[RMDB]
RNA sequence: GGGAACGACUCGAGUAGAGUCGAAAAAGCCAAGAACCCACCCAUCGGGGUCCGACGUUCCUACCCUUUCUUACCUGUGGCCGGCAUGGUCCCAGCCUCCUCGCUGGCGCCGGCUGGGCAACAUUCCGAACAUAUUAUGGUUCGCCAUAAUAUGUUCAAAAGAAACAACAACAACAAC
Reactivity to DMS in 0.01 (KOAc 150mM, MgCl2 10mM, bicine 150mM(pH8.5), 24C), signal-to-noise 3, nucleotides 027 to 126: a120g010c040c040a090a100g010a090a090c020c020c020a130c070c040c050a060u000c080g030g010g010g000u000c030c040g000a220c050g010u000u010c000c000u000a140c070c030c040u000u000u000c060u000u000a100c110c080u010g010u000g010g010c000c010g010g010c030a070u010g010g000u010c300c000c000a010g020c010c060u000c160c070u010c140g000c030u000g000g020c240g020c010c020g010g000c010u000g000g000g010c030a050a050c070a090u010u020c130c100
Reactivity to 2A3 in 0.01 (KOAc 150mM, MgCl2 10mM, bicine 150mM(pH8.5), 24C), signal-to-noise 2, nucleotides 027 to 126: a000g010c010c000a020a040g060a090a060c030c000c030a010c000c040c000a080u100c080g030g010g000g000u020c030c030g040a070c010g010u020u000c020c000u030a050c020c020c000u040u110u080c030u050u080a090c010c030u080g020u060g110g020c020c020g020g000c030a090u130g030g020u060c000c010c000a010g000c000c020u090c000c020u070c040g010c020u010g020g000c010g030c030c000g020g000c000u020g000g020g010c000a040a020c000a080u130u080c080c060